[RMDB]
RNA sequence: GGGAACGACUCGAGUAGAGUCGAAAAAGCUGUGGCGGAGCGUCGAUGUCUCUAGUGGGUGCUCGCGUGGCUCAAUGCGGAGGUGGGGGUAGGACCGCAUGAUACGGGAAUGUAGGGCUCUGACUGGCACUGUGUUGAAGUUCGCUUCAACACAGUGAAAAGAAACAACAACAACAAC
Reactivity to 2A3 in 0.01 (KOAc 150mM, MgCl2 10mM, bicine 150mM(pH8.5), 24C), signal-to-noise 8, nucleotides 027 to 126: a000g080c070u060g020u070g080g060c030g050g040a050g030c020g040u040c020g070a070u090g090u020c030u000c020u090a090g050u110g050g030g030u050g020c000u010c040g050c040g030u070g030g000c030u030c050a070a120u130g010c020g030g030a080g050g060u180g040g030g000g000g010u040a030g010g080a040c020c000g020c040a040u080g020a030u080a080c050g020g020g050a040a070u120g030u140a070g010g010g000c010u000c030u050g070a100c030u020g010g010
Reactivity to DMS in 0.01 (KOAc 150mM, MgCl2 10mM, bicine 150mM(pH8.5), 24C), signal-to-noise 5, nucleotides 027 to 126: a060g010c040u020g030u020g010g010c070g000g010a040g010c070g010u000c050g000a080u020g010u030c070u010c050u010a130g030u030g000g010g010u010g020c040u000c020g000c050g010u020g010g020c060u000c090a060a090u020g020c040g000g010a110g010g020u000g000g000g000g030g010u030a060g020g000a120c050c020g020c080a060u010g000a110u020a050c090g000g010g020a090a060u020g010u010a070g000g010g000c040u010c050u010g000a050c040u000g000g020